[RMDB]
RNA sequence: GGGAACGACUCGAGUAGAGUCGAAAAAAAAAUGUUUGGAGGAAGAAAAACAAAGGCAGGAAGUGGCGGCGGCCUGACGGUGCGUGUGUGUCUGCAGAGAAGGGAGGGAGCCGGCUCAGUCUCUUCUGUAGACUUACACUUUCGAGUGUAAGUCUACAAAAGAAACAACAACAACAAC
Reactivity to 2A3 in 0.01 (KOAc 150mM, MgCl2 10mM, bicine 150mM(pH8.5), 24C), signal-to-noise 2, nucleotides 027 to 126: a000a000a000a000a000u070g050u020u030u070g090g010a020g070g030a050a050g050a080a170a000a010a000c080a070a070a020g050g000c030a020g060g000a080a020g060u040g060g050c010g010g000c010g030g040c000c030u040g050a010c020g000g000u040g050c020g020u090g000u000g000u000g040u060c030u040g000c000a000g020a010g000a120a010g030g030g010a050g020g020g000a030g050c000c000g020g000c020u020c060a030g020u000c000u000c000u010u040c020u010
Reactivity to DMS in 0.01 (KOAc 150mM, MgCl2 10mM, bicine 150mM(pH8.5), 24C), signal-to-noise 1, nucleotides 027 to 126: a060a020a010a090a120u020g050u040u000u000g000g000a100g010g000a050a040g000a030a070a020a050a050c110a020a050a070g000g000c030a060g000g070a040a120g020u010g010g000c010g010g000c160g030g000c070c030u030g000a110c100g000g030u000g040c030g030u010g010u000g010u000g000u000c050u000g010c090a060g000a070g000a040a020g000g000g010a070g000g000g050a110g000c050c030g030g000c020u000c020a110g030u000c000u000c000u000u000c030u000

An RNA of 177 nucleotides, treated with 2A3 and DMS and read out base by base. For 2A3, 1,354 sequencing reads were counted. For DMS the reverse transcriptase was MarathonRT. 2A3 adducts were read by reverse transcription with SuperScript II with manganese. The RNA was probed in 150 mM KOAc, 10 mM MgCl2 and 150 mM bicine (pH 8.5) at 24 C. For DMS, 1,691 sequencing reads were counted.